[RMDB]
RNA sequence: GGGAACGACUCGAGUAGAGUCGAAAACGUAGCUUCUAAGUGGCCGCACGAAUGGCGAAUAAGCCAACCUAAGGGGAAGCUACUGAUACGGCCAGCAGUAGCUGCAAUGUGAUGCAGUCAAAGGAGCAAAUACAUAGAUAUUCGUAUCUAUGUAUUUAAAAGAAACAACAACAACAAC
Reactivity to DMS in 0.01 (KOAc 150mM, MgCl2 10mM, bicine 150mM(pH8.5), 24C), signal-to-noise 9, nucleotides 027 to 126: c080g000u020a090g010c010u000u000c010u000a110a130g030u020g010g010c000c000g020c040a050c060g010a100a120u010g010g000c010g010a140a120u050a140a150g000c000c000a040a130c080c030u010a090a100g020g010g010g010a130a030g000c000u000a000c000u000g000a060u030a070c070g000g010c040c020a130g000c030a020g010u000a040g000c000u000g010c110a060a070u040g010u030g000a120u000g000c000a030g010u000c030a040a090a060g000g000a030g010c040
Reactivity to 2A3 in 0.01 (KOAc 150mM, MgCl2 10mM, bicine 150mM(pH8.5), 24C), signal-to-noise 9, nucleotides 027 to 126: c030g020u020a000g000c010u010u000c010u030a090a040g040u010g010g000c000c000g000c000a030c010g050a080a050u040g010g000c010g010a050a090u180a110a010g000c000c000a010a030c010c010u060a050a090g040g000g000g010a010a000g000c000u000a000c000u000g000a000u030a060c010g000g000c000c000a000g000c000a000g010u010a000g000c000u010g000c010a020a020u090g030u060g050a130u010g000c010a000g010u010c010a020a020a010g020g000a010g000c000